[RMDB]
RNA sequence: GGGAACGACUCGAGUAGAGUCGAAAAUGACAAGCAAUGUAAAGGAGCAUUUCAGCUAAUUUGGCAUCAGUUUGCCUGAGAAAGGAAUUCAUGACUCUUUCAUGGACACGCAUGGGCCGUGUGUGAAUGAACUGGUGUGGGGUCAUCUUAGCUGGGACGUACCUACUCCGUUCGCGGAGUAGGUACGAAAAGAAACAACAACAACAAC
Reactivity to 2A3 in 0.01 (KOAc 150mM, MgCl2 10mM, bicine 150mM(pH8.5), 24C), signal-to-noise 1, nucleotides 027 to 156: u100g010a010c060a060a010g040c030a030a180u210g010u170a230a000a000g030g000a070g020c000a060u010u000u140c000a000g000c000u000a000a020u020u050u030g040g000c000a010u000c000a050g000u000u030u040g060c010c000u100g010a110g170a050a080a000g090g000a030a060u070u050c000a000u070g050a080c080u060c050u140u140u040c020a000u080g000g050a010c000a000c000g000c060a030u050g070g000g050c100c070g000u040g000u000g000u010g000a000a140u060g000a000a000c000u000g000g000u060g000u140g000g030g010g020u050c000a000u040c010u000u010a000g020c050u000g000g010g000a010